[RMDB]
About this RNA
Chemical mapping of a 177-nucleotide RNA with DMS and 2A3. It was measured as part of the RMDB library RFMREP. The RNA was probed in 150 mM KOAc, 10 mM MgCl2 and 150 mM bicine (pH 8.5) at 24 C. The DMS profile rests on 3,321 reads.

RNA sequence: GGGAACGACUCGAGUAGAGUCGAAAAAAACCACAUGAUGAAAAUAAUUGAUACGAUGAACUUGCGAGUCCUGAGUAUAACUGAACUCAACAAUUACUCAGUUGAGCGUAGGUUUGAUAUGAAAUUACGAUAAUCAUAACUUCGGUUAUGAUUAUCGAAAAGAAACAACAACAACAAC
Reactivity to DMS in 0.01 (KOAc 150mM, MgCl2 10mM, bicine 150mM(pH8.5), 24C), signal-to-noise 4, nucleotides 027 to 126: a070a060a120c040c010a110c210a120u010g020a120u000g000a080a050a130a090u000a030a030u000u010g000a140u000a070c110g000a100u020g000a020a020c010u000u000g010c020g000a060g010u010c100c040u000g010a070g000u000a040u010a040a060c110u000g000a050a070c210u020c160a060a040c060a030a030u010u000a010c030u000c020a030g000u010u020g020a030g020c000g020u000a050g000g000u010u000u000g020a070u000a060u000g010a070a040a050u000u000a070
Reactivity to 2A3 in 0.01 (KOAc 150mM, MgCl2 10mM, bicine 150mM(pH8.5), 24C), signal-to-noise 4, nucleotides 027 to 126: a000a000a000c140c030a150c090a140u270g050a060u110g050a060a050a040a090u110a050a050u080u050g050a030u020a170c070g050a050u160g010a030a010c000u010u000g010c010g010a040g170u030c000c010u010g020a000g010u030a060u030a100a070c060u020g080a050a030c050u050c170a020a060c000a040a090u060u020a010c000u030c030a010g000u060u090g050a030g030c000g010u000a000g010g040u010u010u040g090a080u070a030u110g080a030a060a020u040u030a030